[RMDB]
RNA sequence: GGGAACGACUCGAGUAGAGUCGAAAACAAGCCUUUGCCCAGAGCACUCCGCUCUUUGAGGAGAUUAUGCGCUUUAAGGAGUCUUUGGAAGAGUCGCUUAACGAUCUCAAGAUGCAGAGCGCGCAAAUGGACCACUUAUAUUCGUAUAAGUGGUCCAAAAAGAAACAACAACAACAAC
Reactivity to 2A3 in 0.01 (KOAc 150mM, MgCl2 10mM, bicine 150mM(pH8.5), 24C), signal-to-noise 1, nucleotides 027 to 126: c030a050a080g080c000c050u030u150u110g090c040c010c030a000g000a000g040c020a000c020u000c010c000g010c000u050c000u100u050u090g030a040g000g010a030g010a030u040u040a040u150g040c080g000c030u070u020u020a030a020g090g000a110g170u030c020u090u140u160g050g060a100a050g010a060g170u220c000g000c000u060u040a070a020c000g030a120u040c000u000c000a000a030g030a060u160g000c050a000g000a000g000c040g000c010g000c060a010a040a300
Reactivity to DMS in 0.01 (KOAc 150mM, MgCl2 10mM, bicine 150mM(pH8.5), 24C), signal-to-noise 2, nucleotides 027 to 126: c180a100a150g020c070c050u000u000u000g000c020c040c040a150g010a090g020c040a090c000u000c010c070g040c010u000c040u000u000u000g000a040g030g000a100g010a150u000u000a040u000g020c040g000c030u000u000u010a140a120g010g000a110g020u000c070u000u010u020g020g010a120a100g020a020g000u000c050g000c060u020u010a050a050c040g000a190u010c000u000c000a040a050g000a060u000g050c010a070g010a050g000c050g000c020g000c160a020a040a090